Background:
Chemical mapping of a 177-nucleotide RNA with 2A3 and DMS. Values are in units of 0.01, from 0 to 300, in steps of 10. Values cover nucleotides 27 to 126. For 2A3, 18,736 sequencing reads were counted. Source: RMDB library OK1LIB, as collected in RNAgym. For 2A3 the reverse transcriptase was SuperScript II with manganese. The DMS profile rests on 11,631 reads.
[RMDB]
RNA sequence: GGGAACGACUCGAGUAGAGUCGAAAAGAAGUGGCAGGGACAUGCCCCAAAAGCUCGUUCUAGCAACAUAUGUUUGGCUAGUUCGAGCGAUUAGUCUUGAGGAGCGUCCUCUCGCCUCUUAACGAGAGGAUACUCAGUAGUUCGCUACUGAGUAUCCAAAAGAAACAACAACAACAAC
Reactivity to 2A3 in 0.01 (KOAc 150mM, MgCl2 10mM, bicine 150mM(pH8.5), 24C), signal-to-noise 9, nucleotides 027 to 126: g130a020a010g010u010g000g000c020a010g020g000g000a010c020a060u280g030c010c000c000c010a010a020a010a020g000c000u000c000g000u000u000c000u000a000g020c010a010a070c020a070u300a080u300g130u100u100u090g140g020c000u000a000g000u000u000c000g000a000g000c000g000a000u010u070a030g090u030c080u070u080g030a180g040g020a160g030c020g010u000c010c000u030c000u030c060g000c020c000u020c000u030u050a080a070c080g020a020g010a030
Reactivity to DMS in 0.01 (KOAc 150mM, MgCl2 10mM, bicine 150mM(pH8.5), 24C), signal-to-noise 5, nucleotides 027 to 126: g000a050a030g010u000g000g020c020a080g000g000g000a020c050a110u030g020c030c010c010c030a030a060a100a230g000c000u000c000g010u000u000c000u000a000g010c000a060a040c030a230u020a130u070g010u020u020u030g000g060c000u000a010g000u000u000c000g010a010g010c000g010a010u020u030a090g000u040c120u010u000g030a180g000g000a190g000c140g000u000c010c000u010c020u010c140g010c020c010u000c010u000u010a070a100c120g000a100g000a260